[RMDB]
RNA sequence: GGGAACGACUCGAGUAGAGUCGAAAAGAAAGUAGAGGCGGGUACGUUGGCAGCAGAGUGCGGCCGCGUUACUUUUGUAACGAGCACUCCGGCCGCUGCCUCCGUCACCGCCUCGACGGAGGGAAAAGGGCUAAUCCUAUUUCGAUAGGAUUAGCCCAAAAGAAACAACAACAACAAC
Reactivity to DMS in 0.01 (KOAc 150mM, MgCl2 10mM, bicine 150mM(pH8.5), 24C), signal-to-noise 1, nucleotides 027 to 126: g020a130a150a090g070u000a090g010a020g020g020c000g000g030g060u040a010c030g030u000u010g050g030c000a010g040c050a110g010a020g020u000g000c060g010g060c300c280g010c030g000u000u020a000c000u010u000u010u010g020u000a010a020c000g000a240g020c050a020c030u000c020c170g010g050c230c170g000c010u010g010c000c000u010c040c030g000u000c100a020c020c000g010c010c030u000c000g000a010c000g010g010a060g010g020g010a100a040a120a140